This 177-nucleotide RNA was probed chemically with DMS and 2A3. Values are in units of 0.01, from 0 to 300, in steps of 10. The RNA was probed in 150 mM KOAc, 10 mM MgCl2 and 150 mM bicine (pH 8.5) at 24 C. It was measured as part of the RMDB library RFM100. 2A3 adducts were read by reverse transcription with SuperScript II with manganese. The DMS profile rests on 2,917 reads. Reactivities are given for positions 27 through 126.
RNA sequence: GGGAACGACUCGAGUAGAGUCGAAAAUAAAAAAAUUUCGCAUGGUGAAUCCCCCUGUGUGGAGGGGCGACUGGUGAAAAAUCCUUGCUUGUGAUUCAUUAUCGACACGGGUUCGGUGGUACCAGGCGAGAAGAGGCUAAUUCGUUAGCCUCUUCUCAAAAGAAACAACAACAACAAC
Reactivity to DMS in 0.01 (KOAc 150mM, MgCl2 10mM, bicine 150mM(pH8.5), 24C), signal-to-noise 2, nucleotides 027 to 126: u050a030a060a060a140a080a080a130u000u000u000c010g020c110a050u000g040g050u000g010a190a090u000c020c000c040c300c000u010g040u010g020u000g000g000a050g020g000g000g020c150g020a050c070u000g040g000u000g000a000a130a050a050a050u010c000c010u000u000g000c020u000u000g000u020g040a100u010u020c070a100u030u010a050u020c110g000a010c030a030c030g000g000g000u000u000c150g000g010u000g030g000u020a030c030c030a040g000g010c130
Reactivity to 2A3 in 0.01 (KOAc 150mM, MgCl2 10mM, bicine 150mM(pH8.5), 24C), signal-to-noise 2, nucleotides 027 to 126: u180a000a060a000a000a000a030a040u060u040u020c020g000c030a030u060g080g000u120g060a060a140u030c000c000c000c000c000u020g000u000g030u100g100g030a000g020g020g010g000c030g050a020c030u000g030g030u060g080a120a000a040a040a000u110c010c000u030u030g010c000u060u050g080u080g040a170u160u000c010a020u080u220a100u180c120g010a010c010a010c010g070g000g000u090u090c030g010g000u010g000g000u000a020c010c010a010g030g000c010